[RMDB]
RNA sequence: GGGAACGACUCGAGUAGAGUCGAAAAGAAGUGGCAGGGACAUGCCCCAUAAGCUCGUUCUAGCAACAUAUGUUUGGCUAGUUCGAGCGAUUAGUCUUGAGGAGCGUCCUCUCGCCUGUUGACGAGAGACUAUGAGCCCAUUCGUGGGCUCAUAGUCAAAAGAAACAACAACAACAAC
Reactivity to 2A3 in 0.01 (KOAc 150mM, MgCl2 10mM, bicine 150mM(pH8.5), 24C), signal-to-noise 3, nucleotides 027 to 126: g130a070a020g100u110g080g000c010a030g080g040g000a060c060a090u190g010c000c000c010c000a070u020a100a010g000c000u000c000g000u000u000c000u000a010g000c010a000a070c020a110u300a100u300g140u100u040u110g160g040c000u000a010g010u000u000c000g010a000g000c020g000a010u000u060a020g030u030c100u060u060g050a110g020g020a090g040c000g040u010c000c000u030c000u000c040g000c000c010u040g010u000u020g040a050c040g010a030g000a000
Reactivity to DMS in 0.01 (KOAc 150mM, MgCl2 10mM, bicine 150mM(pH8.5), 24C), signal-to-noise 2, nucleotides 027 to 126: g000a090a050g000u010g000g040c010a120g000g000g000a070c060a060u010g000c020c010c030c040a050u010a110a140g020c000u000c000g000u010u010c000u000a000g000c000a040a010c010a160u070a130u100g020u020u000u040g000g000c010u000a000g030u000u000c000g020a040g000c000g000a010u010u000a100g030u010c100u050u000g030a150g000g000a180g000c120g000u000c010c010u000c030u000c040g010c030c000u000g000u000u000g000a140c010g030a060g000a210

Source: RMDB library OK1LIB, as collected in RNAgym. Chemical mapping of a 177-nucleotide RNA with 2A3 and DMS. For DMS, 3,316 sequencing reads were counted. DMS adducts were read by reverse transcription with MarathonRT. For 2A3 the reverse transcriptase was SuperScript II with manganese.